[RMDB]
RNA sequence: GGGAACGACUCGAGUAGAGUCGAAAAUUUUUUGUCACCUCGGGUUGCCAACUGGAUGAUAUUGACAAGGAAACAUCAUCCUUGAGAGUCCCAUAUAUUGGUUCUACCACUGAUGAGAGAACAGACAGAUGAGUAUCAUGUUCGCAUGAUACUCAUCAAAAGAAACAACAACAACAAC
Reactivity to 2A3 in 0.01 (KOAc 150mM, MgCl2 10mM, bicine 150mM(pH8.5), 24C), signal-to-noise 3, nucleotides 027 to 126: u060u030u030u000u000u090g020u040c030a030c050c000u000c020g000g010g010u050u050g040c030c010a060a100c120u050g010g010a030u020g000a010u050a080u060u150g100a110c090a110a100g170g030a100a070a080c030a030u030c010a010u000c010c000u020u030g140a190g000a030g080u000c020c020c030a020u080a010u000a030u090u080g070g000u060u050c020u040a110c000c050a070c120u150g080a120u160g090a210g010a010g020a050a010c020a030g090a020c020a020
Reactivity to DMS in 0.01 (KOAc 150mM, MgCl2 10mM, bicine 150mM(pH8.5), 24C), signal-to-noise 4, nucleotides 027 to 126: u000u000u010u000u020u000g020u000c020a090c070c030u000c020g000g010g020u000u000g010c120c050a050a150c140u000g010g000a010u000g010a020u000a050u000u000g010a270c160a080a090g020g010a110a050a040c090a050u000c020a010u000c010c000u010u000g000a240g000a180g000u000c000c010c020a090u020a120u000a160u000u000g000g010u000u010c030u000a080c050c020a150c200u000g010a090u000g030a190g000a130g000a050a030c050a080g000a110c280a080